[RMDB]
RNA sequence: GGGAACGACUCGAGUAGAGUCGAAAAGUGACUAAAACUUACACAACUCAUCCAAAGCACCCUGCCCGUCGGGCGGCUGCGGAUUAAAUCAGUAGACACGGCUAAGCAUGUAGUACCGACAGCGGAGUACUGGCGGACGGGGGUUCAAAUCCCCCCGGAUCAGACAUAAGUUCGCUUAUGUCUGAUCAAAAGAAACAACAACAACAAC
Reactivity to 2A3 in 0.01 (KOAc 150mM, MgCl2 10mM, bicine 150mM(pH8.5), 24C), signal-to-noise 3, nucleotides 027 to 156: g030u020g040a070c090u170a110a030a170a050c060u190u210a070c060a010c020a100a230c070u060c070a020u020c020c000a050a010a010g030c000a010c000c010c000u010g010c000c010c000g050u040c010g010g010g000c040g030g010c010u010g010c000g000g010a000u020u040a000a010a000u120c030a000g030u040a000g030a010c010a020c120g060g000c070u060a060a020g050c050a040u130g040u140a060g010u050a100c020c020g030a040c020a020g000c020g080g050a060g030u070a100c020u000g010g010c000g000g010a000c000g000g000g010g000g000u040u100c050a060a090a060u050c040c010c000c000c010c000g010
Reactivity to DMS in 0.01 (KOAc 150mM, MgCl2 10mM, bicine 150mM(pH8.5), 24C), signal-to-noise 2, nucleotides 027 to 156: g050u010g010a300c030u010a120a050a040a060c030u040u000a170c060a110c080a100a130c060u020c040a070u000c020c040a010a300a120g010c020a040c010c000c010u010g010c030c010c050g010u010c090g030g000g050c010g000g040c020u000g010c300g020g000a120u010u010a020a130a220u010c050a050g040u000a030g010a030c040a030c060g000g000c030u010a030a130g070c010a060u010g000u000a070g000u010a130c000c000g000a050c000a040g060c030g040g000a130g000u000a030c010u020g000g010c020g000g050a070c060g020g000g030g030g000u000u000c040a060a100a110u010c070c000c000c000c010c020g010